An RNA of 177 nucleotides, treated with DMS and 2A3 and read out base by base. The data come from the RNA Mapping Database (RMDB), libraries RFM100 and RFMREP. The RNA was probed in 150 mM KOAc, 10 mM MgCl2 and 150 mM bicine (pH 8.5) at 24 C.
[RMDB]
RNA sequence: GGGAACGACUCGAGUAGAGUCGAAAACGGGUGUGUCUUCUUUUCCUGCUUGAGAUAGCGCUAUGUCACUGUUCCUCAUUUGAAGAUUUGUUUUGAUCAAAAAUAUGUUCAACUCUUUUUCACCGGCAACGGAAAGUGUAUUCGUACACUUUCCGUUAAAAGAAACAACAACAACAAC
Reactivity to DMS in 0.01 (KOAc 150mM, MgCl2 10mM, bicine 150mM(pH8.5), 24C), signal-to-noise 6, nucleotides 027 to 126: c120g000g000g000u010g010u010g010u010c030u000u010c030u000u000u000u000c030c030u010g010c040u000u010g010a100g000a090u020a060g010c040g000c030u000a070u020g000u010c020a070c080u010g010u010u000c020c010u010c140a100u010u000u000g000a050a080g000a050u000u000u000g000u000u000u000u000g010a050u020c040a020a080a080a090a100u020a080u010g010u010u000c030a030a050c080u000c010u000u000u000u000u000c040a090c090c060g010g020c210
Reactivity to 2A3 in 0.01 (KOAc 150mM, MgCl2 10mM, bicine 150mM(pH8.5), 24C), signal-to-noise 9, nucleotides 027 to 126: c020g010g030g010u040g020u010g020u030c020u040u030c000u050u100u040u050c010c010u040g040c020u060u080g060a060g020a110u110a080g030c040g010c060u070a060u130g060u040c030a020c100u030g010u030u020c010c010u040c030a090u070u080u120g080a070a050g040a090u030u040u110g100u030u110u050u050g040a030u060c080a010a040a050a090a060u180a100u190g020u010u010c000a010a020c020u010c000u030u030u010u020u020c050a080c050c030g070g000c020